[RMDB]
Conditions: 150 mM KOAc, 10 mM MgCl2 and 150 mM bicine (pH 8.5), 24 C. This 177-nucleotide RNA was probed chemically with DMS.

RNA sequence: GGGAACGACUCGAGUAGAGUCGAAAAGAUAUGGACCAGAGCGAGCGAUAAGCUGGUAUCGGAAACGAUACGCAGCUUUUGACGCUCCCUCUGGUCCUAAGUCAAAAGGAUCUGUUCGCAGAUCCAAGUAACUGUGAGGGUUCGCCCUCACAGUUACAAAAGAAACAACAACAACAAC
Reactivity to DMS in 0.01 (KOAc 150mM, MgCl2 10mM, bicine 150mM(pH8.5), 24C), signal-to-noise 2, nucleotides 027 to 126: g010a050u000a290u000g000g000a010c000c000a020g020a020g050c300g000a010g020c000g010a170u010a030a000g060c010u000g010g010u000a000u030c010g050g000a090a040a100c000g000a010u000a000c000g020c010a010g000c010u000u000u010u000g000a220c190g010c000u000c010c170c000u000c000u000g000g000u000c000c010u000a000a050g000u020c060a100a050a110a130g000g000a010u000c000u010g000u010u010c180g050c000a020g020a000u010c000c000a020a110
Reactivities are rounded to 0.1 and cut off at 0 and 3.
For DMS the reverse transcriptase was MarathonRT.
For DMS, 1,688 sequencing reads were counted.